Annotation:
An RNA of 207 nucleotides, treated with 2A3 and read out base by base. For 2A3 the reverse transcriptase was SuperScript II with manganese. Source: RMDB library M2RFPK, as collected in RNAgym.

RNA sequence: GGGAACGACUCGAGUAGAGUCGAAAAAGCAGGACCGCGUUACGACGCGGUCCUGCAGCAAUGAGUAGAAGCGGUCAAAUUUGGUGUCGAGUUCCAACAAACCAAAUUCGGGCAUUGCUCACUCCAAAAAACUCUCUUUAGUUCGCUAAAGAGAGAAGUGAACGAAUAUGUUCGCAUAUUCGUUCACAAAAGAAACAACAACAACAAC
Reactivity to 2A3 in 0.01 (KOAc 150mM, MgCl2 10mM, bicine 150mM(pH8.5), 24C), signal-to-noise 1, nucleotides 027 to 156: a000g020c000a010g000g000a010c050c000g070c110g100u020u120a090c300g070a030c030g050c000g000g040u000c000c000u000g000c000a010g000c000a000a050u070g010a000g000u130a030g030a130a030g000c020g000g010u000c000a000a030a030u010u010u010g000g000u030g100u100c140g080a090g110u200u080c010c010a030a050c020a070a190a000c040c000a000a000a000u040u030c070g060g000g000c070a080u000u240g010c000u000c000a010c010u000c010c030a000a030a050a010a120a120c010u010c000u010c000u000u010u000a010g010u100u040c180g000c190u000a000a000a000g010a000g000a000g000a000a000